[RMDB]
RNA sequence: GGGAACGACUCGAGUAGAGUCGAAAAGCGGAUGUCCGUCACAUCCACCACCAUGGAUGGGAAAGCAUGCAGAGGUUCUCGAGGCAUGCGAAAGGAUGGUAUGCACAGAACCUCGCACGUACGGAAACCAUCCCUAGGAUUAGGUGCCGACGUACGGUACCUGCCGUACGUUCGCGUACGGCAGGUAAAAAGAAACAACAACAACAAC
Reactivity to DMS in 0.01 (KOAc 150mM, MgCl2 10mM, bicine 150mM(pH8.5), 24C), signal-to-noise 2, nucleotides 027 to 156: g010c060g030g010a100u000g040u010c000c100g020u010c100a210c020a020u010c010c000a010c000c080a210c050c020a230u010g010g000a070u000g010g010g000a050a200a180g040c050a050u000g000c010a150g040a050g010g000u000u000c000u000c110g060a220g010g010c020a040u000g000c000g010a040a130a130g040g000a160u010g020g030u000a040u000g000c040a090c000a050g020a030a060c020c000u000c020g010c000a000c000g050u010a060c000g000g000a110a100a140c000c000a020u020c010c000c040u050a110g010g000a130u000u000a070g010g030u000g010c020c020g010a110c070g010u000a070c010g000g010
Reactivity to 2A3 in 0.01 (KOAc 150mM, MgCl2 10mM, bicine 150mM(pH8.5), 24C), signal-to-noise 3, nucleotides 027 to 156: g060c050g000g020a050u050g020u030c020c010g030u020c010a000c000a040u020c020c000a020c000c010a020c010c010a030u070g000g010a020u000g000g040g050a100a050a020g040c020a010u030g000c030a030g010a010g060g000u040u020c040u080c120g070a150g060g000c000a010u000g030c000g030a090a030a010g160g010a020u100g050g010u000a000u000g000c000a010c000a030g010a010a010c000c000u000c000g000c000a000c000g040u140a020c040g090g000a060a020a020c030c010a010u010c000c010c020u130a150g020g070a160u140u120a070g040g000u020g000c030c020g050a110c090g070u160a010c000g040g020